Description:
Conditions: 150 mM KOAc, 10 mM MgCl2 and 150 mM bicine (pH 8.5), 24 C. Chemical mapping of a 177-nucleotide RNA with 2A3 and DMS. As a SHAPE reagent, 2A3 marks flexible, mostly unpaired nucleotides at the ribose 2'-OH. It was measured as part of the RMDB library M2PK90.

RNA sequence: GGGAACGACUCGAGUAGAGUCGAAAAUAAAACCGCGAAGAGAACCAAGCCUUGAGACACAAGGAGGGAUGUCUCUAGGCUUGGUUCUCGACUAGUGUCGAGUCGUUCCCAAUCCCUCCGCAAAAAACUAUUACUUACUGUUCGCAGUAAGUAAUAGAAAAGAAACAACAACAACAAC
Reactivity to 2A3 in 0.01 (KOAc 150mM, MgCl2 10mM, bicine 150mM(pH8.5), 24C), signal-to-noise 2, nucleotides 027 to 126: u080a010a120a010a030c090c020g040c090g150a170a130g200a030g000a180a000c010c000a000a000g010c010c010u010u010g000a000g000a000c000a000c010a070a080g010g000a000g010g010g000a000u010g000u000c000u000c000u010a010g010g000c000u000u010g010g000u000u000c000u000c000g000a000c000u000a000g040u020g050u030c000g000a000g000u000c010g010u000u000c000c000c010a000a000u010c000c000c000u000c000c000g000c000a060a070a000a000a000a000
Reactivity to DMS in 0.01 (KOAc 150mM, MgCl2 10mM, bicine 150mM(pH8.5), 24C), signal-to-noise 3, nucleotides 027 to 126: u000a090a060a110a120c120c110g010c110g010a110a110g010a120g000a010a010c000c000a010a020g010c000c000u000u000g000a010g000a000c010a050c270a040a060g010g010a010g020g000g000a040u000g000u000c000u000c000u000a010g010g000c000u000u000g010g010u000u000c010u000c000g000a020c010u010a060g000u010g010u000c000g010a010g000u010c000g000u000u000c000c000c000a020a000u000c000c000c000u000c000c010g040c200a000a050a080a050a070a060